[RMDB]
RNA sequence: GGGAACGACUCGAGUAGAGUCGAAAACAACAUAAACCCCCAUCUCUGCAAAAAAUUAAACAAGGAUUGGCUGGGCAUGGUGGCUCAUGCCUGUAGUCCCAGCUACAUGGGAGGCUGAGGUGGGAGGACUAUGCUCCUGUUUCGACAGGAGCAUAGUAAAAGAAACAACAACAACAAC
Reactivity to 2A3 in 0.01 (KOAc 150mM, MgCl2 10mM, bicine 150mM(pH8.5), 24C), signal-to-noise 2, nucleotides 027 to 126: c010a000a020c010a070u280a130a220a110c010c000c000c000c000a000u000c010u000c010u060g000c030a060a050a000a030a060a080u190u190a160a140a070c070a070a050g170g020a100u060u040g010g000c000u010g000g020g000c010a010u030g060g020u020g050g000c010u020c030a030u100g000c000c000u010g020u040a020g000u010c000c000c020a110g010c030u100a050c010a040u030g030g000g010a010g000g000c020u020g010a010g000g010u000g000g020g010a130g000g050
Reactivity to DMS in 0.01 (KOAc 150mM, MgCl2 10mM, bicine 150mM(pH8.5), 24C), signal-to-noise 2, nucleotides 027 to 126: c040a090a140c150a120u000a030a120a270c030c010c010c000c020a020u000c000u000c000u000g030c080a000a030a080a090a080a030u010u010a050a060a070c240a050a140g000g000a150u000u010g020g030c000u000g010g000g000c010a010u000g000g010u000g000g000c030u000c040a040u010g000c000c000u020g040u010a020g020u010c000c000c000a000g030c020u000a050c140a090u000g000g020g000a060g000g010c020u000g000a010g020g020u000g010g010g010a020g010g010
Structure probing data (2A3 and DMS) for a 177-nucleotide construct. The DMS profile rests on 1,861 reads. For DMS the reverse transcriptase was MarathonRT. DMS (dimethyl sulfate) methylates the pairing face of unpaired adenines and cytosines. Values cover nucleotides 27 to 126.